[RMDB]
RNA sequence: GGGAACGACUCGAGUAGAGUCGAAAACUCUCGAGGAGACUCGAGAGAGCAUGCUUCGGCAUGCAACGCUGCGCAUGACAAGAACGGCUAAUCGCGCCCGCAGCGCAGCAUAUGUAGGAUGACGCACGUCAACACAUAUGGUGCUCGUUCUGUCACACUAGGCAUAUCCCUUCGGGGAUAUGCCUAGAAAAGAAACAACAACAACAAC
Reactivity to 2A3 in 0.01 (KOAc 150mM, MgCl2 10mM, bicine 150mM(pH8.5), 24C), signal-to-noise 2, nucleotides 027 to 156: c020u040c020u030c000g010a030g030g000a130g050a130c000u000c000g000a000g000a000g020a000g000c010a000u000g000c000u010u130c190g160g010c000a000u000g040c000a040a010c070g020c020u030g000c030g050c060a130u160g000a030c010a110a160g000a030a010c000g000g000c050u090a150a090u140c060g020c020g000c050c020c010g030c070a010g000c000g000c020a000g020c000a000u000a000u030g030u000a070g070g100a270u030g000a010c000g100c200a140c300g040u000c020a030a010c000a000c010a020u020a000u080g000g170u030g040c030u020c110g020u000u000c000u010g000u080c000a030c020a000
Record summary:
Structure probing data (2A3) for a 207-nucleotide construct. Source: RMDB library OK3TST, as collected in RNAgym. Reactivities are given for positions 27 through 156. For 2A3 the reverse transcriptase was SuperScript II with manganese.